[RMDB]
Chemical mapping of a 177-nucleotide RNA with DMS. Conditions: 150 mM KOAc, 10 mM MgCl2 and 150 mM bicine (pH 8.5), 24 C. Values are in units of 0.01, from 0 to 300, in steps of 10. DMS adducts were read by reverse transcription with MarathonRT.

RNA sequence: GGGAACGACUCGAGUAGAGUCGAAAAAAGAUAUGGAAGGCUGUGCCAGGAGUCGAACUCUAAGACAGCACCUCGGAAACGAGGUGUCGAGAGUUCCGCUCCGGUAAUACAGCCUUCCUAAGUCAAACAGUGAACGAACGUUCGCGUUCGUUCACUGAAAAGAAACAACAACAACAAC
Reactivity to DMS in 0.01 (KOAc 150mM, MgCl2 10mM, bicine 150mM(pH8.5), 24C), signal-to-noise 1, nucleotides 027 to 126: a230a020g040a080u000a300u000g010g020a010a000g010g010c000u000g050u000g000c010c030a170g010g000a000g010u000c300g000a000a050c000u000c020u000a230a250g010a080c300a170g000c050a030c000c000u000c000g000g000a190a080a200c000g040a000g010g000u000g010u000c010g030a040g000a040g030u000u010c060c180g000c030u000c000c000g000g000u030a030a210u010a210c000a010g000c000c010u010u040c000c010u000a000a060g010u000c060a010a040a120